[RMDB]
RNA sequence: GGGAACGACUCGAGUAGAGUCGAAAAGAUAUGGACUCCCCGCUCAGAACAGUAUGGACAUGCUAAACGGUCGGAAACGACCGCACUAGCAACAGCCAUACUGUUCUGAGCGGUGGAGUCCUAAGUCCAUUAAUACAGACUUCGGUCUGUAUUAAUGAAAAGAAACAACAACAACAAC
Reactivity to DMS in 0.01 (KOAc 150mM, MgCl2 10mM, bicine 150mM(pH8.5), 24C), signal-to-noise 2, nucleotides 027 to 126: g010a090u010a300u010g000g020a000c000u000c000c010c000c010g020c000u000c000a010g010a030a000c000a020g000u010a010u000g000g000a070c100a240u000g000c010u010a040a120a150c000g010g000u010c000g000g000a120a140a280c010g000a010c000c000g000c050a030c270u000a010g000c010a040a090c300a180g010c000c000a000u000a010c010u000g000u000u020c000u000g010a000g010c000g000g000u000g000g010a000g000u000c000c010u000a000a100g000u000c010
Chemical mapping of a 177-nucleotide RNA with DMS. It was measured as part of the RMDB library TTRINS. The DMS profile rests on 2,982 reads. The reactions ran in a buffer of 150 mM KOAc, 10 mM MgCl2 and 150 mM bicine (pH 8.5), at 24 C.